[RMDB]
RNA sequence: GGGAACGACUCGAGUAGAGUCGAAAAGUUGAUGACGCCUCCAGCGACGCGGAGGGAGACGUGACGACGGACGAGGACAACGGCACUGAUGGCCGCAGGGAUUUGCGUGCCGCUGCCUCCCUGAGGCACUAUACCAUGCAUUCGUGCAUGGUAUAGUAAAAGAAACAACAACAACAAC
Reactivity to 2A3 in 0.01 (KOAc 150mM, MgCl2 10mM, bicine 150mM(pH8.5), 24C), signal-to-noise 9, nucleotides 027 to 126: g030u030u040g060a150u090g040a050c050g030c010c000u010c020c020a040g030c030g110a070c060g010c050g040g040a050g030g040g010a020g000a010c050g030u060g020a020c040g010a010c030g050g020a030c050g030a050g020g030a020c020a060a020c040g020g010c020a020c060u150g060a150u160g090g010c010c010g000c030a040g050g030g070a080u090u080u170g040c060g020u060g010c000c010g010c020u020g020c010c010u000c030c000c010u030g020a060g000g020c010
Reactivity to DMS in 0.01 (KOAc 150mM, MgCl2 10mM, bicine 150mM(pH8.5), 24C), signal-to-noise 9, nucleotides 027 to 126: g010u000u010g010a080u010g000a070c060g000c020c000u000c020c060a110g010c060g010a100c140g010c070g000g000a100g000g010g000a050g000a100c060g010u000g000a080c040g000a150c080g000g010a090c130g010a060g000g010a090c050a060a080c050g000g000c020a040c070u010g010a110u020g010g010c030c010g000c100a040g000g010g000a120u030u020u010g010c110g000u010g010c000c010g010c040u000g000c020c040u010c000c040c020u010g000a110g010g010c080
An RNA of 177 nucleotides, treated with 2A3 and DMS and read out base by base. It was measured as part of the RMDB library OK1LIB. DMS (dimethyl sulfate) methylates the pairing face of unpaired adenines and cytosines. The reactions ran in a buffer of 150 mM KOAc, 10 mM MgCl2 and 150 mM bicine (pH 8.5), at 24 C. The DMS profile rests on 46,484 reads.